[RMDB]
Conditions: 150 mM KOAc, 10 mM MgCl2 and 150 mM bicine (pH 8.5), 24 C. The record gives the reactivity of an RNA of 177 nucleotides to DMS and 2A3. For DMS, 3,682 sequencing reads were counted.
RNA sequence: GGGAACGACUCGAGUAGAGUCGAAAAGAUAUGGACAAAUUCGAUCGAUAAGCUGCACUCGGAAACGAGUGGCAGCUUUUGACGAUCAAUUUGUCCUAAGUCAAACGAAACCUCUUCGGAGGUUUCGCCUAGAUCCUUUCUUCGGAAAGGAUCUAGGAAAAGAAACAACAACAACAAC
Reactivity to DMS in 0.01 (KOAc 150mM, MgCl2 10mM, bicine 150mM(pH8.5), 24C), signal-to-noise 3, nucleotides 027 to 126: g000a020u000a160u010g000g000a000c000a000a000a000u000u000c250g020a020u010c000g030a120u020a000a010g010c000u000g000c000a030c000u000c020g010g000a050a040a080c000g010a000g010u000g010g020c000a000g000c000u000u000u010u000g010a230c110g020a010u000c000a020a010u000u000u000g000u000c000c000u000a010a070g000u000c010a140a130a300c020g010a010a020a010c000c000u000c000u000u000c280g030g000a010g000g010u000u000u000c000g020
Reactivity to 2A3 in 0.01 (KOAc 150mM, MgCl2 10mM, bicine 150mM(pH8.5), 24C), signal-to-noise 1, nucleotides 027 to 126: g010a020u030a050u070g000g010a000c000a010a020a000u060u100c280g000a010u000c010g030a090u010a300a020g000c020u010g010c010a000c000u010c000g030g030a050a030a010c030g000a010g020u020g010g070c020a010g010c020u010u000u010u000g010a010c000g000a000u000c000a000a000u010u010u000g000u000c000c000u020a000a000g000u000c020a110a090a190c020g000a000a000a000c000c010u000c000u130u130c300g190g000a000g010g040u000u000u000c000g020